[RMDB]
RNA sequence: GGGAACGACUCGAGUAGAGUCGAAAAGUAGAUGGCUACCUGCGGUGACUGCGUCCAGUUGCGAACCCACUGGCCCUGCCCGAUCACCCGGAGGAACUCGUUGAAGAUGCCGGCCUGGGGAUCGUAGCAUAUUUACCUACUUCGGUAGGUAAAUAUGAAAAGAAACAACAACAACAAC
Reactivity to DMS in 0.01 (KOAc 150mM, MgCl2 10mM, bicine 150mM(pH8.5), 24C), signal-to-noise 9, nucleotides 027 to 126: g020u020a050g020a100u020g010g000c030u000a080c050c020u000g010c040g000g010u020g000a130c050u010g010c070g010u010c030c050a060g020u020u010g020c050g000a090a120c080c020c020a080c060u000g010g000c020c020c030u010g000c020c030c010g010a030u010c030a100c020c010c010g010g020a260g010g000a040a080c090u010c060g020u020u010g010a100a050g020a070u020g000c030c020g000g030c030c000u000g010g000g000g010a030u010c010g010u010a090g000
Reactivity to 2A3 in 0.01 (KOAc 150mM, MgCl2 10mM, bicine 150mM(pH8.5), 24C), signal-to-noise 9, nucleotides 027 to 126: g080u080a020g010a140u090g050g010c020u040a070c020c020u050g030c050g020g040u050g040a080c020u050g010c010g050u030c020c000a040g010u050u050g060c050g040a070a080c020c010c010a020c030u020g030g000c010c000c010u040g020c000c010c000g010a010u020c020a200c080c000c010g000g010a020g010g030a070a100c020u020c060g150u110u200g070a150a040g020a040u290g050c010c000g050g070c000c030u080g000g000g000g010a000u020c020g020u030a020g030